Source information: An RNA of 177 nucleotides, treated with 2A3 and DMS and read out base by base. The 2A3 profile rests on 1,774 reads. The RNA was probed in 150 mM KOAc, 10 mM MgCl2 and 150 mM bicine (pH 8.5) at 24 C. Reactivities are given for positions 27 through 126.

RNA sequence: GGGAACGACUCGAGUAGAGUCGAAAAGAAAUUGUGAAAGAGUAAUGGAGUUCAAUAAUCCACUAUAUCGAAUGCAGUGCAUGAGAUAUCUAACGUUGAUGAAUUAUCUACGAACUUCACAAAGAAAGGCAAUUGUAUACUUCGGUAUACAAUUGCCAAAAGAAACAACAACAACAAC
Reactivity to 2A3 in 0.01 (KOAc 150mM, MgCl2 10mM, bicine 150mM(pH8.5), 24C), signal-to-noise 3, nucleotides 027 to 126: g070a020a100a040u070u020g000u020g020a080a080a110g120a030g110u070a090a000u050g030g000a040g010u070u020c020a070a180u140a130a060u110c030c010a000c010u000a000u000a010u020c000g050a060a010u000g010c090a080g170u040g300c000a000u000g000a000g000a050u000a010u090c090u050a090a020c000g010u020u030g020a040u000g010a020a060u080u000a030u040c040u020a020c040g100a030a010c010u010u000c000a000c010a000a020a020g110a030a010a000
Reactivity to DMS in 0.01 (KOAc 150mM, MgCl2 10mM, bicine 150mM(pH8.5), 24C), signal-to-noise 2, nucleotides 027 to 126: g010a020a040a100u000u000g000u020g000a030a020a010g000a220g020u000a100a160u060g020g000a000g000u000u010c050a000a070u010a040a020u000c030c100a160c080u000a020u000a010u000c000g020a200a000u000g000c050a250g000u080g000c030a000u000g000a240g000a000u000a000u000c100u010a090a060c300g000u010u010g000a090u000g010a020a000u000u030a110u000c050u010a010c060g000a090a050c020u020u000c050a010c040a040a040a130g010a130a080a050